[RMDB]
RNA sequence: GGGAACGACUCGAGUAGAGUCGAAAAUAAUCAAGAUGAAUCGUUUUUAGUUUGCUUGCUUACCUUAGGGGCCAGUAUGAGAUCGACUUGAAUCUUUUUAUGUAGGCAGAAAGCGACGGAAUUUAAAGGAUAUACUAAUCUUCGGAUUAGUAUAUCCAAAAGAAACAACAACAACAAC
Reactivity to 2A3 in 0.01 (KOAc 150mM, MgCl2 10mM, bicine 150mM(pH8.5), 24C), signal-to-noise 6, nucleotides 027 to 126: u140a010a050u120c100a030a040g060a110u160g110a080a120u080c090g050u000u010u010u040u100a140g030u030u070u190g020c010u040u040g000c010u030u040a090c000c000u050u090a070g060g000g000g000c010c000a010g010u040a060u150g070a060g010a050u070c020g050a080c050u040u040g040a040a050u040c000u000u080u010u010u010a080u130g040u010a010g000g000c030a020g080a070a060a000g020c010g030a020c000g020g060a030a040u060u080u090a150a100a030
Reactivity to DMS in 0.01 (KOAc 150mM, MgCl2 10mM, bicine 150mM(pH8.5), 24C), signal-to-noise 4, nucleotides 027 to 126: u060a090a090u040c100a080a060g010a090u010g030a070a040u000c040g000u000u010u020u040u020a080g000u000u010u020g020c020u010u000g010c050u000u010a070c050c090u000u030a090g030g020g000g010c060c040a040g000u000a030u010g000a040g010a030u010c060g000a110c150u020u030g000a060a090u010c000u000u000u010u010u030a030u030g020u000a020g000g010c010a100g000a040a050a040g000c040g010a030c050g010g040a070a080u010u010u020a050a070a150

The record gives the reactivity of an RNA of 177 nucleotides to 2A3 and DMS. For DMS, 10,320 sequencing reads were counted. It was measured as part of the RMDB library OK1LIB.